Chemical mapping of a 177-nucleotide RNA with DMS and 2A3. Reactivities are rounded to 0.1 and cut off at 0 and 3.
[RMDB]
RNA sequence: GGGAACGACUCGAGUAGAGUCGAAAAGAUAUGGACGAUGGGGAGAAGUUCUCGGAAACGAGAAUACUUCAUCGAUCUAAAUCGUCCUAAGUCAAAACAUAUGGUCGUGUUCGCACGACCAUAUGAACUAAACAUCUAGGUUCGCCUAGAUGUUUAGAAAAGAAACAACAACAACAAC
Reactivity to DMS in 0.01 (KOAc 150mM, MgCl2 10mM, bicine 150mM(pH8.5), 24C), signal-to-noise 8, nucleotides 027 to 126: g010a010u000a080u000g010g010a010c000g010a020u000g010g010g000g000a070g000a080a080g000u000u000c000u000c000g010g000a050a060a130c000g010a010g000a010a040u000a070c010u000u000c000a120u000c090g000a090u000c010u000a040a100a070u000c010g000u000c000c000u000a040a110g010u010c110a090a090a090a210c020a000u000a000u000g010g010u000c000g020u010g010u010u010c240g010c010a010c000g010a010c000c000a000u000a000u000g010a050a160
Reactivity to 2A3 in 0.01 (KOAc 150mM, MgCl2 10mM, bicine 150mM(pH8.5), 24C), signal-to-noise 4, nucleotides 027 to 126: g010a000u030a020u060g000g000a000c010g010a020u030g030g000g010g020a090g020a060a050g030u000u010c010u000c020g010g020a030a050a010c000g010a000g000a020a030u110a100c010u010u000c010a070u300c030g030a030u000c010u060a050a110a210u050c000g000u030c000c000u030a050a010g100u090c080a020a010a080a210c010a020u010a010u010g030g000u000c000g000u010g070u100u120c300g020c110a000c000g000a000c000c000a000u000a000u000g000a000a000
Source: RMDB library TTRDEL, as collected in RNAgym. The RNA was probed in 150 mM KOAc, 10 mM MgCl2 and 150 mM bicine (pH 8.5) at 24 C.